[RMDB]
Structure probing data (2A3) for a 207-nucleotide construct. Source: RMDB library M2RFOK, as collected in RNAgym. The RNA was probed in 150 mM KOAc, 10 mM MgCl2 and 150 mM bicine (pH 8.5) at 24 C. High 2A3 reactivity points to a flexible backbone, as in loops and unpaired stretches.
RNA sequence: GGGAACGACUCGAGUAGAGUCGAAAAAACGUUGCAUGAUCGUAAAACAUGCCCGGCUUACCGUGAGCCGCCUUUGAAAGAGAGGUUUACACGGACUCUGUUGCGUUACGCACGUACCUAACUUGUGAAAACGGCAUCUUGUUCGCAAGAUGCCGAAGGUUCUCAUUUGGUUCGCCAAAUGAGAACCAAAAGAAACAACAACAACAAC
Reactivity to 2A3 in 0.01 (KOAc 150mM, MgCl2 10mM, bicine 150mM(pH8.5), 24C), signal-to-noise 1, nucleotides 027 to 156: a000a000c000g000u000u000g000c000a000u000g010a010u240c010g120u210a000a300a000a000c000a000u000g040c000c000c000g010g010c010u040u120a090c010c000g030u010g020a030g000c010c000g040c020c010u070u050u040g070a150a010a000g070a000g000a000g000g040u060u050u030a000c020a000c000g100g000a100c040u060c040u110g100u080u050g000c000g000u050u040a100c150g020c000a010c000g010u070a100c000c050u090a110a150c040u100u050g040u030g160a000a000a000a130c000g000g010c000a000u000c020u000u010g040u010u030c090g040c110a000a000g010a000u010g000c010c000g000a000a000